Structure probing data (2A3 and DMS) for a 207-nucleotide construct. Values are in units of 0.01, from 0 to 300, in steps of 10. 2A3 adducts were read by reverse transcription with SuperScript II with manganese. DMS adducts were read by reverse transcription with MarathonRT. It was measured as part of the RMDB library OK3TST.
RNA sequence: GGGAACGACUCGAGUAGAGUCGAAAAAUGUCGAAUAGGAGUGGUGAGAGAGGGCAUCCCUGUCUUGUGCCAGUUUUCAAAGGGAAUGCUUCCAGUUUUUGCCCAUUCAGUAUGAUAUUGGCUGUGGGUUUGUCAUAAAUAGCUCUUAUUAUUUUGACUAGGAAAUGGAGUUCGCUCCAUUUCCUAGAAAAGAAACAACAACAACAAC
Reactivity to 2A3 in 0.01 (KOAc 150mM, MgCl2 10mM, bicine 150mM(pH8.5), 24C), signal-to-noise 2, nucleotides 027 to 156: a010u140g010u030c030g020a020a050u030a070g050g000a020g040u020g000g060u070g000a050g000a000g010a020g040g030g000c000a050u030c010c000c010u100g060u120c030u060u070g000u110g040c010c000a060g020u080u080u130u100c050a090a070a010g040g000g050a100a040u030g010c000u050u040c030c000a130g000u010u020u000u090u120g030c000c010c000a010u070u080c000a000g040u030a060u110g090a070u040a060u250u050g040g000c000u040g000u010g010g070g000u020u060u140g040u040c000a000u050a160a100a040u040a090g010c000u020c000u050u020a060u120u070a060u030u100u020u010g010a000
Reactivity to DMS in 0.01 (KOAc 150mM, MgCl2 10mM, bicine 150mM(pH8.5), 24C), signal-to-noise 1, nucleotides 027 to 156: a110u010g040u000c070g020a120a090u010a060g020g000a100g060u000g020g020u010g010a090g010a150g000a060g060g010g000c000a060u000c020c030c010u010g010u010c060u010u000g010u000g050c050c040a090g030u000u000u000u000c000a080a140a130g010g000g000a060a040u010g090c020u000u000c030c020a130g010u000u010u000u010u020g020c040c060c000a110u000u010c030a090g030u010a120u000g010a110u000a060u000u000g010g000c060u020g000u000g020g020g030u000u000u000g000u000c010a060u000a050a090a070u000a150g020c050u000c030u010u000a030u000u010a190u000u000u010u000g000a240